[RMDB]
RNA sequence: GGGAACGACUCGAGUAGAGUCGAAAAGAUGGAGGGUCUGGCCUCGGACACCUCCUAUAAGAUGUAACUAUUACGAGGCCAUUAAUGGCGUUUUCGCCUAGGUGCACGGCGGCGUGCGUGACACCGUAAGACUUAAUGAAUAACACGCCGGAUACAACAGUACUCAUAAUUUCGAUUAUGAGUACUGAAAAGAAACAACAACAACAAC
Reactivity to DMS in 0.01 (KOAc 150mM, MgCl2 10mM, bicine 150mM(pH8.5), 24C), signal-to-noise 2, nucleotides 027 to 156: g010a110u010g000g010a050g020g020g050u000c020u000g030g000c030c010u000c020g000g010a070c020a080c010c000u010c030c010u000a050u000a080a120g010a140u020g000u000a100a170c090u000a150u000u000a100c040g000a040g010g030c000c010a200u000u000a060a050u000g020g010c000g020u000u000u000u000c010g020c000c040u000a080g020g010u000g020c040a050c030g040g020c000g000g000c040g030u000g010c000g010u000g000a240c020a060c010c010g020u010a060a100g030a060c080u020u010a100a130u020g010a140a100u000a080a090c000a030c000g010c000c030g000g000a220u000a090c020a070a180
Reactivity to 2A3 in 0.01 (KOAc 150mM, MgCl2 10mM, bicine 150mM(pH8.5), 24C), signal-to-noise 5, nucleotides 027 to 156: g110a040u070g000g010a000g000g010g010u000c040u070g020g030c000c000u020c000g000g000a040c060a150c000c000u000c000c000u010a030u030a020a040g050a020u140g060u120a050a090c090u040a070u150u090a050c010g000a000g000g010c000c000a000u020u100a040a060u080g010g000c030g060u090u070u190u290c030g020c000c000u000a060g000g000u000g010c000a000c000g000g030c000g000g000c000g020u000g000c000g000u000g010a040c000a000c000c030g000u020a040a030g040a000c000u060u160a060a040u160g100a080a050u130a100a000c010a000c000g000c000c000g000g020a050u090a010c050a100a010